The record gives the reactivity of an RNA of 177 nucleotides to 2A3 and DMS. DMS adducts were read by reverse transcription with MarathonRT. It was measured as part of the RMDB library OK1LIB. For DMS, 2,004 sequencing reads were counted. For 2A3 the reverse transcriptase was SuperScript II with manganese.
[RMDB]
RNA sequence: GGGAACGACUCGAGUAGAGUCGAAAAUUACAGGUGCAGGCGAUUCAUUCUGUGCUGCAGUAGUAUAUAGCUGGUUAAAUGGGAUGUCUACUGAAGAUAUAUUAAUUGCUGGUAUGGUUAACGCAAAAUUCAGUACGGCUUUCGAGCCGUACUGAAUAAAAGAAACAACAACAACAAC
Reactivity to 2A3 in 0.01 (KOAc 150mM, MgCl2 10mM, bicine 150mM(pH8.5), 24C), signal-to-noise 2, nucleotides 027 to 126: u090u030a030c090a080g110g000u050g000c000a040g000g140c100g130a090u030u150c030a050u290u100c040u100g030u060g080c000u000g000c000a020g000u060a000g060u000a020u000a000u030a010g040c110u030g150g000u110u100a000a150a080u210g150g050g050a050u060g000u000c020u070a030c020u090g010a090a020g080a080u030a030u000a120u090u180a060a070u030u000g020c050u020g010g000u030a030u140g140g080u020u100a000a030c010g050c050a000a140a060
Reactivity to DMS in 0.01 (KOAc 150mM, MgCl2 10mM, bicine 150mM(pH8.5), 24C), signal-to-noise 1, nucleotides 027 to 126: u030u000a020c100a040g000g000u010g020c040a090g040g000c030g000a060u050u000c170a070u040u000c020u000g020u000g000c040u000g030c020a020g000u030a020g000u010a000u000a060u010a060g020c060u010g000g000u000u040a060a110a150u020g010g000g000a010u010g000u000c030u000a030c050u000g000a030a030g000a120u050a070u030a060u140u000a050a130u000u000g000c000u000g000g000u010a050u000g000g020u020u020a090a040c060g040c200a090a010a050